The data come from the RNA Mapping Database (RMDB), library RFMREP. The record gives the reactivity of an RNA of 177 nucleotides to 2A3 and DMS. DMS adducts were read by reverse transcription with MarathonRT. Conditions: 150 mM KOAc, 10 mM MgCl2 and 150 mM bicine (pH 8.5), 24 C. The 2A3 profile rests on 4,261 reads.
[RMDB]
RNA sequence: GGGAACGACUCGAGUAGAGUCGAAAAUUCCUGAGCCUUGUACACACCGCCCGUCACGUCAUGGGAGCCGAGGGUGCCCGAAGCCGCCACGAUUCAGUGGUGUCCACGGCAAGAUCGGUGACUGGGAUCUGAAUUUUAUGUUCGCAUAAAAUUCAGAAAAAGAAACAACAACAACAAC
Reactivity to 2A3 in 0.01 (KOAc 150mM, MgCl2 10mM, bicine 150mM(pH8.5), 24C), signal-to-noise 3, nucleotides 027 to 126: u030u000c000c000u020g030a040g060c000c010u060u060g090u130a040c050a010c020a020c060c020g030c010c020c000g040u030c040a040c110g050u050c040a110u110g070g000g010a020g020c000c000g000a020g000g040g000u010g000c000c000c000g000a010a000g010c020c010g000c000c010a010c020g100a080u300u220c080a050g020u000g030g000u000g020u000c000c000a020c010g010g000c010a000a000g040a030u040c020g020g010u020g020a040c050u070g020g050g020a070
Reactivity to DMS in 0.01 (KOAc 150mM, MgCl2 10mM, bicine 150mM(pH8.5), 24C), signal-to-noise 4, nucleotides 027 to 126: u000u000c000c000u010g010a110g010c030c020u000u020g010u000a050c100a130c090a080c060c080g000c060c030c010g020u000c060a090c110g010u000c060a070u010g010g000g020a300g010c030c030g000a040g010g010g010u000g010c000c020c020g000a100a120g000c060c020g000c020c010a010c020g010a140u000u010c180a120g020u000g010g010u010g000u000c010c000a300c300g010g000c020a040a080g010a110u010c010g010g020u000g000a180c040u010g010g010g000a110
Reactivities are given for positions 27 through 126.
For DMS, 3,121 sequencing reads were counted.